Description:
Chemical mapping of a 177-nucleotide RNA with 2A3 and DMS. Values are in units of 0.01, from 0 to 300, in steps of 10. The DMS profile rests on 1,719 reads. For 2A3, 2,766 sequencing reads were counted. It was measured as part of the RMDB library TTRDES.

[RMDB]
RNA sequence: GGGAACGACUCGAGUAGAGUCGAAAAGAUAUGGAAAUAUCAUGGCAAAUGUGACGUGGUCGGAAACGACCAUACGUCGAAUGCCAUGAGUAUUUCCUAAGUCAAAGCUGCCGGUUCGCCGGCAGCACGUGCGUAAACUGUUCGCAGUUUACGCACGAAAAGAAACAACAACAACAAC
Reactivity to 2A3 in 0.01 (KOAc 150mM, MgCl2 10mM, bicine 150mM(pH8.5), 24C), signal-to-noise 1, nucleotides 027 to 126: g020a010u110a010u140g000g040a010a000a000u020a000u030c000a010u000g000g030c020a040a110a250u300g140u280g130a000c010g030u020g000g000u000c030g040g000a040a120a060c030g010a030c000c000a000u070a010c000g020u040c000g060a090a140u260g000c000c020a000u000g010a010g020u010a020u010u000u000c000c000u000a130a010g020u030c040a000a000a270g010c000u000g010c020c010g090g000u050u080c300g000c100c000g000g120c010a000g030c000a000
Reactivity to DMS in 0.01 (KOAc 150mM, MgCl2 10mM, bicine 150mM(pH8.5), 24C), signal-to-noise 2, nucleotides 027 to 126: g000a030u010a300u000g010g010a010a000a000u000a030u000c000a000u000g010g020c000a020a110a060u020g060u000g000a010c000g030u000g000g010u000c000g010g000a070a090a210c030g000a020c000c000a030u010a030c050g000u000c000g000a210a180u010g000c000c000a000u000g000a020g040u020a010u000u000u000c000c000u000a010a160g010u000c040a080a120a160g000c020u000g010c000c000g000g020u000u010c300g020c000c000g030g000c000a000g020c000a020